[RMDB]
RNA sequence: GGGAACGACUCGAGUAGAGUCGAAAACCACGCGGGCGCUCUGCGAGCAUGUGCUGACGGGAUGCUAUCUAAAGAACAAGUCCGCUUGGGAACCAGCUUGCAAUCGUGGGCACAUGGUCGAUCCGCUCGGCGAGUACUUCAACGCCGUGUGGGCAUCGAUAUCUAUAGCCUUCGGGCUAUAGAUAUCAAAAGAAACAACAACAACAAC
Reactivity to 2A3 in 0.01 (KOAc 150mM, MgCl2 10mM, bicine 150mM(pH8.5), 24C), signal-to-noise 3, nucleotides 027 to 156: c020c000a010c090g020c020g000g020g000c030g000c030u020c040u120g000c000g010a020g040c010a010u010g020u010g000c000u100g180a020c010g000g000g070a100u110g030c020u060a070u080c030u080a050a060a100g120a060a030c030a080a000g020u060c060c070g120c070u010u000g010g010g020a030a040c020c000a030g020c060u040u070g000c040a040a050u010c020g010u010g010g010g010c000a000c000a010u040g040g150u000c000g010a030u030c010c000g030c010u020c000g000g000c010g020a050g060u100a170c090u180u220c110a120a040c010g000c000c000g020u010g000u000g000g020g010c000a040u060c100
An RNA of 207 nucleotides, treated with 2A3 and read out base by base.
Conditions: 150 mM KOAc, 10 mM MgCl2 and 150 mM bicine (pH 8.5), 24 C.
Reactivities are given for positions 27 through 156.